[RMDB]
RNA sequence: GGGAACGACUCGAGUAGAGUCGAAAAGCAAUGACCUUCGGGUCAUUGCAAAUUAAAACAGGCAAGUUCCAGCCUGAAAAAGGAACAAAGAUCGAAAGAUCAAAAGGGGCAUCUUCGGAUGCCCCAAGAUAAUAGGUUGGUUCGCCAACCUAUUAUCAAAAGAAACAACAACAACAAC
Reactivity to 2A3 in 0.01 (KOAc 150mM, MgCl2 10mM, bicine 150mM(pH8.5), 24C), signal-to-noise 2, nucleotides 027 to 126: g010c000a000a010u000g010a000c000c010u020u050c240g080g000g000u000c010a000u020u000g010c000a000a000a000u040u010a010a000a020a050c100a020g010g000c020a110a050g010u020u000c010c010a020g000c000c000u000g030a030a000a000a000a000g040g000a040a010c050a050a140a010g010a000u010c010g010a080a040a040g000a020u010c050a010a050a000a120g000g000g020g010c010a000u030c040u070u140c270g090g000a000u000g000c020c000c000c000a000a000
Reactivity to DMS in 0.01 (KOAc 150mM, MgCl2 10mM, bicine 150mM(pH8.5), 24C), signal-to-noise 2, nucleotides 027 to 126: g000c000a000a020u010g000a010c000c000u000u020c170g040g010g020u000c000a010u000u030g030c000a000a010a040u000u020a050a040a130a150c200a030g010g010c000a060a160g030u000u000c010c000a130g020c000c000u030g000a020a030a010a070a030g020g010a000a010c020a120a060a090g000a000u010c010g010a060a060a130g000a020u000c020a020a030a070a080g000g010g040g040c000a000u000c000u000u010c180g010g010a020u000g000c000c000c000c000a000a000